[RMDB]
RNA sequence: GGGAACGACUCGAGUAGAGUCGAAAAAAGGCGCUAGACCUGCUUGGCGUCAAAGGGUCUACAGCGCGCCGUACGGGCGGCAUGGUUGGCCUGCCUGUACAGAUGAGCGAAUGGGUCGAAUCGGCCCGUCAGCAGCUUCUCAGCGGCGACCGUGCGGACACUCAUCCAAAUUCGUUUGGAUGAGUGUAAAAGAAACAACAACAACAAC
Reactivity to 2A3 in 0.01 (KOAc 150mM, MgCl2 10mM, bicine 150mM(pH8.5), 24C), signal-to-noise 2, nucleotides 027 to 156: a000a000g040g000c000g000c000u010a000g010a020c000c010u040g040c060u100u110g130g020c050g060u190c030a060a040a040g020g000g000u000c010u040a060c050a070g030c020g000c000g030c030c030g010u020a010c000g030g040g050c030g000g000c060a070u120g110g060u040u030g090g060c000c020u020g000c020c000u010g020u010a000c010a000g050a030u090g070a010g000c010g000a080a080u120g000g000g000u020c040g050a160a210u190c060g050g000c000c000c030g010u000c010a010g050c010a000g000c000u070u060c040u030c040a030g010c000g060g000c010g000a000c010c000g000u020g010c040g040g000
Reactivity to DMS in 0.01 (KOAc 150mM, MgCl2 10mM, bicine 150mM(pH8.5), 24C), signal-to-noise 1, nucleotides 027 to 156: a070a080g060g000c000g000c030u010a020g000a030c010c000u000g010c120u000u010g020g050c110g050u000c050a040a080a140g000g000g010u000c000u000a070c140a090g000c030g030c030g020c020c040g040u010a030c010g010g010g010c050g000g010c070a030u000g000g050u010u000g020g040c130c000u010g030c030c030u000g000u040a110c050a030g000a130u010g020a140g000c060g000a080a100u000g030g030g050u000c020g010a200a160u030c050g020g030c000c000c010g030u000c000a010g000c040a110g000c020u010u000c100u000c050a070g020c010g030g000c010g030a050c000c020g020u010g000c040g030g010